Source: RMDB library OK2TRN, as collected in RNAgym. This 177-nucleotide RNA was probed chemically with 2A3 and DMS.
[RMDB]
RNA sequence: GGGAACGACUCGAGUAGAGUCGAAAAGGCAAAUCGCGAAGAGCGCUUGAAGAAGCUCAAUCAAUUAACGCAGACAGUAUCUACUACAAACCGCGUGGUCUCUGGUGGGACGGUUAUCAUCAGCAAGUCUUAAAGCCUCAUUCGUGAGGCUUUAAGAAAAAGAAACAACAACAACAAC
Reactivity to 2A3 in 0.01 (KOAc 150mM, MgCl2 10mM, bicine 150mM(pH8.5), 24C), signal-to-noise 1, nucleotides 027 to 126: g010g000c030a050a050a060u050c070g000c030g040a100a030g090a000g030c040g030c070u100u150g060a050a070g060a040a040g060c000u000c040a040a110u050c000a020a020u100u080a110a010c030g050c050a030g030a080c040a020g000u050a100u020c050u070a070c030u060a060c040a030a070a030c020c030g030c020g090u080g000g000u010c000u010c010u030g120g020u050g060g030g020a010c000g030g030u000u100a050u050c000a000u000c000a000g060c040a130a060g050
Reactivity to DMS in 0.01 (KOAc 150mM, MgCl2 10mM, bicine 150mM(pH8.5), 24C), signal-to-noise 4, nucleotides 027 to 126: g030g020c080a050a080a080u010c060g000c040g010a110a090g040a120g000c120g020c110u010u000g020a130a100g000a110a150g010c030u000c090a080a070u000c130a070a080u010u000a050a070c120g000c010a050g020a070c130a080g000u000a130u010c080u000a060c100u000a040c060a030a080a130c090c050g000c070g020u010g010g010u010c020u000c050u000g000g010u010g010g000g010a040c060g010g020u000u000a050u010c050a040u000c060a060g000c210a090a100g000

For 2A3 the reverse transcriptase was SuperScript II with manganese. 2A3 is a SHAPE reagent: it acylates the 2'-hydroxyl of flexible nucleotides of all four kinds. For 2A3, 877 sequencing reads were counted. The RNA was probed in 150 mM KOAc, 10 mM MgCl2 and 150 mM bicine (pH 8.5) at 24 C. DMS adducts were read by reverse transcription with MarathonRT.